[RMDB]
RNA sequence: GGGAACGACUCGAGUAGAGUCGAAAAGUAAAUAAAGCGCACCUAGAUGGAGGUGCGCAACCAGCGUGUCCAUGGAUCACGCAUCCACGCGUCUACCAAGACGCGAAUGGUAAUACAAAUAAAAAAAGUGUUUUCAUAUGUUCGCAUAUGAAAACACAAAAGAAACAACAACAACAAC
Reactivity to 2A3 in 0.01 (KOAc 150mM, MgCl2 10mM, bicine 150mM(pH8.5), 24C), signal-to-noise 2, nucleotides 027 to 126: g010u030a010a100a160u140a060a130a060g000c000g000c000a000c000c030u060a090g080a300u210g210g090a000g050g000u000g020c000g040c000a000a000c000c000a000g000c010g000u010g010u020c060c090a170u140g070g000a040u170c000a000c010g010c000a030u000c010c010a010c010g010c000g020u000c000u040a200c020c080a040a020g000a000c000g030c000g000a010a070u020g010g000u000a030a010u100a070c050a030a060a050u300a070a120a010a010a000a000a000
Reactivity to DMS in 0.01 (KOAc 150mM, MgCl2 10mM, bicine 150mM(pH8.5), 24C), signal-to-noise 1, nucleotides 027 to 126: g030u010a050a120a070u000a020a170a200g020c000g010c000a000c000c010u010a190g000a130u000g010g010a010g030g040u020g000c000g000c000a010a010c120c040a190g010c000g000u020g020u000c010c080a090u000g000g000a060u000c010a010c000g020c010a090u000c020c030a090c000g010c000g000u010c000u000a160c300c270a070a120g000a040c000g000c000g000a000a030u010g000g000u000a070a090u000a070c120a060a100a080u040a030a000a060a020a090a090a020